[RMDB]
RNA sequence: GGGAACGACUCGAGUAGAGUCGAAAAGAUAUGGAUACCAGCAACAGCUGUGACAUCGGAAACGAUGUACAGACAUGCUGAUCCUAAGUCAAACCAGCGAUAUAGUGUUCGCACUAUAUCGCUGGAAGCUAUACAAUAAGUUCGCUUAUUGUAUAGCAAAAGAAACAACAACAACAAC
Reactivity to 2A3 in 0.01 (KOAc 150mM, MgCl2 10mM, bicine 150mM(pH8.5), 24C), signal-to-noise 9, nucleotides 027 to 126: g010a020u060a020u120g010g000a020u060a220c140c030a000g000c010a010a120c040a240g060c020u010g030u120g220a060c000a010u000c000g020g000a050a040a020c010g000a000u000g000u000a000c000a000g080a080c030a050u060g000c000u000g000a010u000c000c000u030a140a030g050u040c040a040a060a130c010c000a000g000c010g000a000u000a000u000a010g010u010g070u100u090c300g040c130a000c000u000a000u000a000u000c000g000c000u000g000g000a000a000
Reactivity to DMS in 0.01 (KOAc 150mM, MgCl2 10mM, bicine 150mM(pH8.5), 24C), signal-to-noise 9, nucleotides 027 to 126: g010a030u000a280u010g000g010a020u000a120c300c020a010g010c010a020a080c300a150g010c010u000g000u010g000a020c000a000u000c000g000g000a090a060a140c000g000a010u000g010u000a020c000a010g000a070c110a170u000g010c000u000g010a040u000c000c000u000a040a130g010u000c030a090a130a240c000c000a000g000c000g010a010u000a000u000a000g010u000g010u000u010c250g020c000a010c000u000a010u000a000u000c000g000c000u000g000g000a010a040